[RMDB]
RNA sequence: GGGAACGACUCGAGUAGAGUCGAAAAUUGAGGCUGUUUACCAGACUGGAUAUCGCCAGUUUGGGAGGAUAGUUAAUUAACAAAUGGACGUGAUCUGGUUCGCCAUCCAUUUCAACCAGUUCAGCUAUCAGCUGGAGCGAUUCGUCGCUCCAGCUGAAAAAGAAACAACAACAACAAC
Reactivity to DMS in 0.01 (KOAc 150mM, MgCl2 10mM, bicine 150mM(pH8.5), 24C), signal-to-noise 1, nucleotides 027 to 126: u010u010g000a140g000g000c020u020g010u010u000u000a300c000c000a040g020a000c000u000g000g040a170u000a110u000c300g000c020c000a000g000u000u000u010g000g000g020a080g000g000a020u000a020g030u000u000a070a140u020u000a110a180c140a050a070a060u000g000g050a030c300g000u000g020a010u000c050u000g010g000u000u000c070g070c000c030a160u000c000c020a020u010u020u020c110a030a110c000c010a030g010u000u000c000a040g020c140u000a200
Annotation: This 177-nucleotide RNA was probed chemically with DMS. The reactions ran in a buffer of 150 mM KOAc, 10 mM MgCl2 and 150 mM bicine (pH 8.5), at 24 C. It was measured as part of the RMDB library OK2TST.